This 207-nucleotide RNA was probed chemically with DMS and 2A3. For 2A3, 1,144 sequencing reads were counted.

RNA sequence: GGGAACGACUCGAGUAGAGUCGAAAAGGUCAGUGCAUCAGCAAAUCAUUGGUUUGCAAUGGGGAUUCUGACUGUGAUGAAGACAGUGCUGAUGAAGACAGAUGUGAGGACUCAGAAAGGAGACCUUCCUGUGAUAUCGAUAAACCUCCUCCUAACACCAGUCGAUGAAUUUCGAUUCAUCGACUGGAAAAGAAACAACAACAACAAC
Reactivity to DMS in 0.01 (KOAc 150mM, MgCl2 10mM, bicine 150mM(pH8.5), 24C), signal-to-noise 1, nucleotides 027 to 156: g000g030u000c020a050g110u000g010c040a050u000c050a150g000c000a010a080a150u000c010a100u010u010g060g060u010u000u010g060c030a050a130u000g020g020g000g030a140u000u010c010u010g000a210c050u000g000u000g030a100u010g010a150a110g000a100c050a090g070u000g030c000u000g000a110u000g010a120a100g000a080c030a170g010a030u010g030u040g000a030g060g010a180c060u000c010a080g010a080a050a070g100g010a080g000a080c030c010u000u000c030c000u010g010u000g050a070u020a150u000c000g000a120u000a060a090a100c010c000u000c020c030u000c030c010u030a080a170c190a070
Reactivity to 2A3 in 0.01 (KOAc 150mM, MgCl2 10mM, bicine 150mM(pH8.5), 24C), signal-to-noise 3, nucleotides 027 to 156: g030g010u050c050a020g050u040g100c010a020u010c010a030g000c000a050a040a040u100c020a050u090u210g040g080u150u080u140g030c040a020a050u040g060g000g000g010a060u080u120c050u100g040a030c000u010g030u050g030a120u070g010a040a050g070a050c080a070g020u040g020c010u000g000a010u030g010a030a000g000a020c050a020g010a030u120g080u110g030a020g000g020a040c040u020c040a070g280a180a130a050g150g020a050g000a070c010c000u040u040c000c000u030g020u050g050a080u060a010u230c120g020a030u120a110a080a010c000c000u080c010c000u040c010c020u040a070a000c030a030
For DMS, 1,896 sequencing reads were counted. It was measured as part of the RMDB library OK3TST. 2A3 adducts were read by reverse transcription with SuperScript II with manganese.